[RMDB]
RNA sequence: GGGAACGACUCGAGUAGAGUCGAAAAGCCUAGGAUUGUCCUCCACCAGUGGACAGACCAGUGGUCUCUGUGUCCCGGUGUGCCCUCACAGGAGUGCCUGGAGAGGUUCUCUUACCCUGAACACGGUGUCACUAGCUCUCCCAGCCAUGCACCAGUGCAUGGCAUGUGCUUUCGAGCACAUGCCAUGAAAAGAAACAACAACAACAAC
Reactivity to 2A3 in 0.01 (KOAc 150mM, MgCl2 10mM, bicine 150mM(pH8.5), 24C), signal-to-noise 4, nucleotides 027 to 156: g030c010c010u030a040g000g050a120u060u110g040u050c000c000u040c040c030a070c020c020a110g050u120g090g030a000c010a010g020a070c010c010a090g050u080g100g040u060c040u000c030u110g050u020g000u040c030c010c010g000g020u060g010u040g020c000c010c000u010c000a130c020a070g040g040a110g120u110g130c000c000u000g010g010a080g010a040g060g000u110u010c030u000c010u040u080a070c020c010c030u050g050a080a010c030a010c070g040g000u040g040u060c020a020c100u040a020g000c010u020c000u000c010c000c000a010g010c030c000a060u100g020c050a040c030c010a050g040u050g090
Reactivity to DMS in 0.01 (KOAc 150mM, MgCl2 10mM, bicine 150mM(pH8.5), 24C), signal-to-noise 2, nucleotides 027 to 156: g020c040c020u010a110g020g010a140u000u000g000u000c030c020u010c010c030a160c080c090a200g020u010g020g000a130c050a050g010a090c010c020a150g000u010g020g020u000c030u000c020u000g000u000g010u000c010c010c060g000g010u000g000u010g000c200c020c010u000c050a090c080a100g030g000a220g040u010g000c010c010u000g010g020a150g030a060g050g010u000u000c050u000c030u010u010a080c020c020c040u010g000a120a100c040a040c010g010g050u000g010u000c050a020c020u000a060g010c030u000c020u000c010c030c040a300g010c020c040a090u000g000c010a090c020c020a140g070u010g020